Overview: An RNA of 177 nucleotides, treated with DMS and 2A3 and read out base by base. Values are in units of 0.01, from 0 to 300, in steps of 10.

RNA sequence: GGGAACGACUCGAGUAGAGUCGAAAAGAUAUGGACUGAAUUGCUUUUGACGCUCGAGUAUCGGAAACGAUACGAGAGCGAUAAGCAACAGUCCUAAGUCAAAGUUGCUGCGUUCGCGCAGCAACAACUAACACGCCAUGUUCGCAUGGCGUGUUAGAAAAGAAACAACAACAACAAC
Reactivity to DMS in 0.01 (KOAc 150mM, MgCl2 10mM, bicine 150mM(pH8.5), 24C), signal-to-noise 1, nucleotides 027 to 126: g000a040u000a140u020g030g000a020c010u000g000a160a230u000u000g000c000u000u000u000u000g000a250c100g020c000u010c000g020a300g040u010a010u000c010g040g000a030a020a100c000g040a020u000a010c000g020a300g000a000g000c010g000a010u000a030a000g010c020a000a010c030a000g020u000c000c000u000a030a080g010u000c000a120a090a130g010u000u000g010c000u000g010c010g050u000u010c210g060c010g040c000a010g000c000a010a010c000a120a170
Reactivity to 2A3 in 0.01 (KOAc 150mM, MgCl2 10mM, bicine 150mM(pH8.5), 24C), signal-to-noise 1, nucleotides 027 to 126: g020a000u070a020u070g000g000a020c010u020g040a300a300u060u000g000c030u200u100u140u300g300a290c160g060c000u000c000g000a000g000u020a000u010c000g000g000a000a030a000c000g020a010u000a000c000g000a010g000a020g020c010g000a000u010a020a000g000c000a000a000c010a010g000u000c010c000u030a020a000g000u020c030a120a050a150g020u020u000g000c000u000g040c020g080u040u090c290g030c030g000c200a000g000c030a000a000c000a000a000
Source information: The RNA was probed in 150 mM KOAc, 10 mM MgCl2 and 150 mM bicine (pH 8.5) at 24 C. It was measured as part of the RMDB library TTRDES. Values cover nucleotides 27 to 126. DMS adducts were read by reverse transcription with MarathonRT.